[RMDB]
RNA sequence: GGGAACGACUCGAGUAGAGUCGAAAAUCAGCGACGCUGGCAACACUUUCGAAUUGCGGGGACGUCCUUAGAGCUCAGUUCUACCAACCAGUGAGGGAAACCUCCGCUGGGGCCUAUGCUAAAAACAUGGGAGAUGGUAAGAAGGAACUGAGAUUGGGAAUAGGACCAAGUUCGCUUGGUCCUAUUCAAAAGAAACAACAACAACAAC
Reactivity to 2A3 in 0.01 (KOAc 150mM, MgCl2 10mM, bicine 150mM(pH8.5), 24C), signal-to-noise 2, nucleotides 027 to 156: u080c010a010g030c050g120a070c100g040c060u050g090g000c050a130a060c040a070c150u210u300u240c080g060a200a100u120u060g020c050g040g040g030g050a050c000g030u020c020c010u110u120a110g020a020g120c010u000c000a000g000u010u000c000u000a020c010c010a020a020c000c000a010g000u010g020a010g000g000g010a020a060a060c010c000u020c040c100g000c000u000g000g000g000g000c000c000u000a010u000g020c030u070a090a060a000a000a000c010a000u000g000g030g020a070g060a300u050g010g000u000a010a000g010a000a000g040g000a000a000c000u000g000a000g000a000u010u130g090g040
Reactivity to DMS in 0.01 (KOAc 150mM, MgCl2 10mM, bicine 150mM(pH8.5), 24C), signal-to-noise 1, nucleotides 027 to 156: u000c030a060g030c040g020a050c050g060c010u020g000g040c060a100a050c060a130c070u000u000u000c070g050a080a150u010u010g010c020g020g010g000g070a170c050g010u020c020c030u010u010a100g050a100g020c000u010c010a030g020u000u000c000u020a030c040c030a100a180c040c000a010g040u020g010a130g010g010g000a130a130a300c000c020u000c050c040g030c020u000g000g000g000g020c000c000u000a000u000g000c000u000a060a050a030a080a050c010a000u000g010g020g000a130g010a240u000g000g030u000a100a090g010a050a120g020g000a010a020c000u000g000a030g020a040u000u000g000g010